[RMDB]
RNA sequence: GGGAACGACUCGAGUAGAGUCGAAAAGUGCAUUCACCCCAGAUGUGCCACCCGUGACUGGGGCCAUGCCAAGUGGCAAGGCACCUCCUGGCAGAGGGCACGGGGGCCUGGGGCUGUCAGGAGGGCCACAAGACUAACUUUUCGAAGUUAGUCUUGUAAAAGAAACAACAACAACAAC
Reactivity to 2A3 in 0.01 (KOAc 150mM, MgCl2 10mM, bicine 150mM(pH8.5), 24C), signal-to-noise 9, nucleotides 027 to 126: g020u030g010c000a020u030u080c050a090c010c000c000c000a000g020a060u060g030u040g040c020c020a090c010c010c010g020u050g070a050c050u030g000g020g030g000c010c010a070u070g000c000c030a300a140g150u200g140g000c050a070a050g040g000c060a300c130c000u000c000c000u000g010g000c010a010g060a070g040g010g010c080a050c110g040g000g000g030g000c010c000u040g000g010g050g040c000u000g000u000c000a000g000g020a000g000g000g010c000c000
Reactivity to DMS in 0.01 (KOAc 150mM, MgCl2 10mM, bicine 150mM(pH8.5), 24C), signal-to-noise 9, nucleotides 027 to 126: g020u000g010c020a050u000u010c100a260c020c000c000c010a100g010a090u000g010u000g010c010c040a190c010c010c020g010u000g010a100c080u010g010g010g010g020c070c080a040u000g010c030c050a230a170g020u000g010g010c030a080a070g010g010c010a110c010c000u000c000c010u010g000g000c020a040g010a150g000g010g000c020a110c090g000g000g010g010g000c020c010u000g010g000g000g020c030u000g010u000c020a010g000g010a040g000g010g010c050c050
Structure probing data (2A3 and DMS) for a 177-nucleotide construct. It was measured as part of the RMDB library OK2TST. For DMS the reverse transcriptase was MarathonRT. The reactions ran in a buffer of 150 mM KOAc, 10 mM MgCl2 and 150 mM bicine (pH 8.5), at 24 C. The 2A3 profile rests on 45,051 reads.